RNA sequence: GGGAACGACUCGAGUAGAGUCGAAAAUCUAUAGAUUCGUCUAUAGAGUGCCAGCUUGUAUAGUUUAAUUGGUUAAAACAUUUGUCUCAUAAAUAAAUAAUGUAAGGUUCAAUUCCUUCUACAAGUACCAGCAGCUAUUGUAGUUCGCUACAAUAAAGCAACUAUAUCCGUUCGCGGAUAUAGUUGCAAAAGAAACAACAACAACAAC
Reactivity to 2A3 in 0.01 (KOAc 150mM, MgCl2 10mM, bicine 150mM(pH8.5), 24C), signal-to-noise 1, nucleotides 027 to 156: u030c000u020a010u000a000g000a020u000u060c150g010u000c080u000a000u000a010g000a010g010u020g040c030c030a050g000c000u000u020g010u010a060u030a110g010u090u020u020a080a010u100u230g020g030u040u100a030a050a030a030c020a050u040u000u100g020u010c030u050c070a050u170a300a120a030u120a020a010a000u080a110a010u140g040u030a100a040g000g000u050u040c040a000a000u020u040c000c000u000u040c000u010a050c000a000a050g000u000a030c000c110a060g040c060a010g030c070u020a000u030u000g000u000a020g030u000u070c200g050c080u000a000c010a000a010u060a080a050a030